[RMDB]
RNA sequence: GGGAACGACUCGAGUAGAGUCGAAAAGAUAUGGAUGGCUUAUUGAGAUUAGCGUCGGAAACGACGCGAUCAAUGAUGUAAGGCCAUCCUAAGUCAAAAGUGCGACGAGGUUCGCCUCGUCGCACAAGUAUUGACUUCACUUCGGUGAAGUCAAUACAAAAGAAACAACAACAACAAC
Reactivity to 2A3 in 0.01 (KOAc 150mM, MgCl2 10mM, bicine 150mM(pH8.5), 24C), signal-to-noise 1, nucleotides 027 to 126: g010a040u020a000u030g000g000a040u010g010g000c010u050u020a060u120u300g300a170g000a080u000u050a150g000c000g040u010c000g000g000a010a000a000c000g000a000c000g000c010g020a010u000c000a030a300u280g240a030u150g030u050a030a040g290g090c010c010a000u000c000c000u000a000a000g010u040c030a000a000a090a170g010u000g000c000g020a000c000g000a020g010g100u070u170c300g120c050c060u000c040g000u010c000g080c010a000c000a000a000
Reactivity to DMS in 0.01 (KOAc 150mM, MgCl2 10mM, bicine 150mM(pH8.5), 24C), signal-to-noise 1, nucleotides 027 to 126: g020a080u000a070u020g000g020a020u000g000g020c000u000u000a010u000u000g010a130g010a040u000u000a060g020c000g000u000c010g010g030a040a010a060c000g010a010c000g020c000g000a000u000c010a200a090u010g010a180u000g010u000a020a060g040g010c000c000a000u000c010c000u000a000a130g000u000c000a100a090a100a150g000u000g010c000g020a020c000g030a060g000g050u010u020c300g010c010c010u000c000g030u000c000g000c000a000c000a010a080